[RMDB]
RNA sequence: GGGAACGACUCGAGUAGAGUCGAAAACUCACUAACUUCGGUUAGUGAGAAAUAAAUUCAGCGGUUUAAAUUUCCAGGGCAUAACCGCUGAUGCCCUCGAAAAAAGCAUUCCCUUCGGGGAAUGCAAGCUUAGUUUCUACUUCGGUAGAAACUAAGCAAAAGAAACAACAACAACAAC
Reactivity to DMS in 0.01 (KOAc 150mM, MgCl2 10mM, bicine 150mM(pH8.5), 24C), signal-to-noise 1, nucleotides 027 to 126: c010u000c000a010c000u000a010a000c000u000u020c190g020g020u000u000a010g020u000g000a030g000a020a080a070u020a030a080a050u020u000c000a000g010c000g000g000u010u000u000a060a110a160u000u010u030c090c190a040g020g020g000c120a090u030a030a070c000c000g030c020u020g000a000u000g000c020c000c000u030c280g030a000a070a020a060a120a070g000c000a010u000u000c020c000c000u000u020c200g000g000g000g000a000a010u000g010c020a020a000
Reactivity to 2A3 in 0.01 (KOAc 150mM, MgCl2 10mM, bicine 150mM(pH8.5), 24C), signal-to-noise 1, nucleotides 027 to 126: c000u010c000a000c000u010a000a000c000u060u030c120g090g000u000u000a000g000u000g040a000g010a020a030a030u010a000a020a010u080u020c010a000g000c000g030g200u000u070u120a060a160a060u250u150u120c080c030a080g060g040g000c010a020u020a080a010c000c010g000c010u000g030a000u000g030c020c020c000u070c110g180a170a170a020a000a000a020g000c000a010u010u010c030c010c000u020u050c170g080g050g010g000a000a000u000g000c000a000a000
An RNA of 177 nucleotides, treated with DMS and 2A3 and read out base by base.
For DMS the reverse transcriptase was MarathonRT.
It was measured as part of the RMDB library M2PK50.